An RNA of 177 nucleotides, treated with DMS and 2A3 and read out base by base. 2A3 is a SHAPE reagent: it acylates the 2'-hydroxyl of flexible nucleotides of all four kinds.
RNA sequence: GGGAACGACUCGAGUAGAGUCGAAAAGAUAUGGACGCACGUAUGGAGCUACGGGUCGGAAACGACCCAGUAGCUAUGAAGUACUGCGUCCUAAGUCAAAACAAGUAGGUCUUCGGACCUACUUGAAGACCUGAUACACGUUCGCGUGUAUCAGGUCAAAAGAAACAACAACAACAAC
Reactivity to DMS in 0.01 (KOAc 150mM, MgCl2 10mM, bicine 150mM(pH8.5), 24C), signal-to-noise 1, nucleotides 027 to 126: g000a010u000a050u000g000g000a020c000g040c000a000c300g000u010a020u000g000g000a030g030c000u000a020c000g000g000g020u000c000g030g030a060a030a060c000g010a010c000c030c010a020g020u000a000g030c000u000a110u000g030a140a280g000u000a000c010u000g020c020g030u000c000c000u000a000a030g040u000c040a090a110a110a260c020a000a020g010u000a000g010g000u000c000u000u020c270g010g020a030c000c000u010a000c000u000u000g010a150a070
Reactivity to 2A3 in 0.01 (KOAc 150mM, MgCl2 10mM, bicine 150mM(pH8.5), 24C), signal-to-noise 1, nucleotides 027 to 126: g000a000u020a010u060g000g000a000c000g000c030a010c190g040u030a010u020g050g090a210g030c000u010a010c020g030g000g010u030c000g000g000a030a010a000c000g010a000c000c000c010a000g000u000a000g010c000u030a190u070g000a000a000g030u000a000c010u040g000c020g010u000c000c000u000a000a000g000u030c040a000a000a070a130c010a030a000g000u010a000g000g030u030c020u050u170c300g070g000a000c030c000u030a010c000u000u020g000a030a010
For 2A3, 3,597 sequencing reads were counted. The DMS profile rests on 1,455 reads.